Overview
Chemical mapping of a 177-nucleotide RNA with DMS and 2A3. For DMS, 1,640 sequencing reads were counted. The data come from the RNA Mapping Database (RMDB), library OK2TRN. For DMS the reverse transcriptase was MarathonRT. The reactions ran in a buffer of 150 mM KOAc, 10 mM MgCl2 and 150 mM bicine (pH 8.5), at 24 C. For 2A3 the reverse transcriptase was SuperScript II with manganese. The 2A3 profile rests on 2,055 reads.
RNA sequence: GGGAACGACUCGAGUAGAGUCGAAAAUGUCGUGAGAUGUUGGGUUAAGUCCCGCAACGAGCGCAACCCUCGACCUUAGUUGCCAGCAUUCAGUUGGGCACUCUAAGGUGACUGCCGGCUAAAAGUCCACCCUCCUGGAAUUCGUUCCAGGAGGGUGAAAAGAAACAACAACAACAAC
Reactivity to DMS in 0.01 (KOAc 150mM, MgCl2 10mM, bicine 150mM(pH8.5), 24C), signal-to-noise 3, nucleotides 027 to 126: u000g030u010c030g020u010g000a300g010a110u000g020u000u010g060g000g010u000u000a090a130g000u000c010c000c010g000c040a030a040c030g000a300g000c010g010c030a090a170c010c010c000u010c190g020a040c010c000u010u000a000g000u000u000g000c010c010a070g000c020a030u000u010c300a120g000u000u000g010g000g000c010a020c190u020c010u020a010a040g000g000u000g000a080c040u000g010c110c080g010g000c070u000a060a060a100a120g020u010c120
Reactivity to 2A3 in 0.01 (KOAc 150mM, MgCl2 10mM, bicine 150mM(pH8.5), 24C), signal-to-noise 1, nucleotides 027 to 126: u110g100u130c010g010u030g010a090g000a040u050g020u240u300g010g000g030u060u110a150a140g300u130c000c000c010g020c010a020a020c010g000a010g000c020g000c010a000a140c000c000c010u030c160g030a030c000c000u000u010a000g010u050u010g000c000c000a000g010c010a060u030u110c030a050g040u040u040g010g050g000c020a020c030u030c000u000a010a020g020g060u010g000a000c010u090g070c010c040g000g060c020u090a240a150a030a020g040u010c010